[RMDB]
RNA sequence: GGGAACGACUCGAGUAGAGUCGAAAAAGCGCGGCAGUCGACCAGUUGCAGGAAGCGGCCCGUGUCGCGCGUAAUGGGGCCUCGGAUCUUUACGCCGCCCGUUCGCGGGUGCGGUACGCAGUCACCGGCCACCAUUUAGUUUCGACUAAAUGGUGGCAAAAGAAACAACAACAACAAC
Reactivity to 2A3 in 0.01 (KOAc 150mM, MgCl2 10mM, bicine 150mM(pH8.5), 24C), signal-to-noise 4, nucleotides 027 to 126: a000g070c030g000c010g000g000c000a030g080u120c020g040a090c050c010a020g030u070u130g050c050a050g060g100a090a020g020c000g020g000c010c010c020g020u030g010u010c120g010c000g000c000g050u060a020a030u100g010g000g010g020c030c040u030c030g040g040a060u030c070u070u130u110a080c130g010c000c010g010c060c010c000g040u070u060c120g000c000g030g050g000u020g030c000g000g010u010a020c050g010c000a020g050u060c010a010c090c010g030
Reactivity to DMS in 0.01 (KOAc 150mM, MgCl2 10mM, bicine 150mM(pH8.5), 24C), signal-to-noise 2, nucleotides 027 to 126: a160g020c050g030c010g000g000c000a050g010u000c020g010a090c020c060a100g000u030u010g010c060a140g000g040a200a090g020c000g000g010c010c110c010g000u010g000u010c000g020c010g030c010g000u000a010a040u000g000g000g000g000c020c040u040c080g050g000a090u000c020u000u010u070a080c150g020c040c020g010c000c020c000g020u010u040c060g010c030g000g000g000u000g030c000g030g000u000a000c050g030c140a080g000u010c030a130c090c060g030